[RMDB]
RNA sequence: GGGAACGACUCGAGUAGAGUCGAAAAGGCAAACACCAAGUCACAAAGAAGCUAAAUGCCCUGUGAGCAUAACCAUCCAUUUCAAACAGUUGAUAUAAAUGGAUUGUAGCAAAUUGUGAUCUCAGGCAAUAUUCUUCGGAUUCGUCCGAAGAAUAUUAAAAGAAACAACAACAACAAC
Reactivity to DMS in 0.01 (KOAc 150mM, MgCl2 10mM, bicine 150mM(pH8.5), 24C), signal-to-noise 7, nucleotides 027 to 126: g020g000c070a080a100a110c140a140c020c020a130a100g010u000c010a010c010a030a030a040g020a300a140g000c020u000a060a140a050u010g000c000c020c110u010g020u010g010a090g010c000a010u000a140a120c210c100a030u000c010c010a010u000u000u010c140a060a120a140c180a130g010u010u000g020a120u000a110u000a020a020a020u000g000g000a010u010u000g010u010a050g010c020a020a250a200u010u000g010u000g010a010u000c070u010c090a090g000g010c150
Reactivity to 2A3 in 0.01 (KOAc 150mM, MgCl2 10mM, bicine 150mM(pH8.5), 24C), signal-to-noise 5, nucleotides 027 to 126: g130g020c030a060a060a020c020a010c040c000a040a010g020u000c010a000c000a010a080a000g060a190a040g020c010u060a120a070a020u030g010c030c010c110u190g150u130g140a080g000c020a020u020a060a020c010c000a000u000c010c000a000u010u020u060c120a130a170a120c040a160g150u150u090g180a090u090a020u050a200a040a000u000g010g000a000u010u010g040u040a010g000c010a000a030a080u020u010g000u000g020a050u010c020u020c040a020g070g000c010